[RMDB]
Structure probing data (DMS) for a 177-nucleotide construct. For DMS, 682 sequencing reads were counted. Conditions: 150 mM KOAc, 10 mM MgCl2 and 150 mM bicine (pH 8.5), 24 C. It was measured as part of the RMDB library OK2TRN.

RNA sequence: GGGAACGACUCGAGUAGAGUCGAAAAGCUGGCCACCAGCCCGUACCUGCGCCAGCACGCUGAUAACCCGGUGCACUGGCAGCAGUGGACGCCGCAGGCACUGGCGGAGGCGGCCGCGCGCGCGGUGGUCUCCGUUCACUUUCGAGUGAACGGAGACAAAAGAAACAACAACAACAAC
Reactivity to DMS in 0.01 (KOAc 150mM, MgCl2 10mM, bicine 150mM(pH8.5), 24C), signal-to-noise 1, nucleotides 027 to 126: g000c060u000g020g030c030c040a020c060c010a140g010c000c110c080g020u020a050c120c020u000g000c020g030c020c020a050g050c130a050c120g060c020u000g000a160u010a130a190c250c170c020g010g000u010g010c070a140c040u000g030g010c120a100g030c000a050g000u000g060g000a160c110g010c070c030g050c040a140g010g010c020a080c030u000g000g010c050g000g030a210g010g010c070g010g000c060c020g020c060g050c160g040c100g000c030g000g040u000g000